[RMDB]
RNA sequence: GGGAACGACUCGAGUAGAGUCGAAAAGACGAGCCACGCGCCGCCGUUGUGCGAUCCGUAGAACCGGGAGCUCCGACCGAUCUCGCGGGGGUUGCGCAGGAUACGGAUGAUGGCGAAGGUCGUGAUAAUGGGUACAGAGUUUCGACUCUGUACCCAUAAAAGAAACAACAACAACAAC
Reactivity to 2A3 in 0.01 (KOAc 150mM, MgCl2 10mM, bicine 150mM(pH8.5), 24C), signal-to-noise 4, nucleotides 027 to 126: g100a000c060g000a020g240c020c010a080c190g050c010g000c020c000g050c010c000g090u060u060g020u010g020c010g000a000u000c000c010g120u180a060g020a220a030c020c000g050g000g000a000g020c020u020c040c040g090a140c020c020g030a050u040c030u010c040g300c000g040g060g000g000g060u030u030g000c010g010c000a000g060g080a070u130a160c010g020g000a020u130g080a150u160g090g010c000g000a010a020g000g000u040c010g000u010g040a030u060a270
Reactivity to DMS in 0.01 (KOAc 150mM, MgCl2 10mM, bicine 150mM(pH8.5), 24C), signal-to-noise 2, nucleotides 027 to 126: g020a070c020g020a140g000c000c000a070c110g030c010g020c010c000g010c000c000g040u010u000g000u000g000c000g040a030u030c020c020g030u020a120g080a070a300c000c000g000g000g010a030g040c160u000c000c080g000a120c300c120g000a020u000c010u010c020g000c010g000g000g000g000g000u010u010g030c020g050c000a160g000g000a130u040a060c000g000g000a110u000g000a100u090g010g000c000g000a090a080g030g020u000c000g010u030g000a160u000a020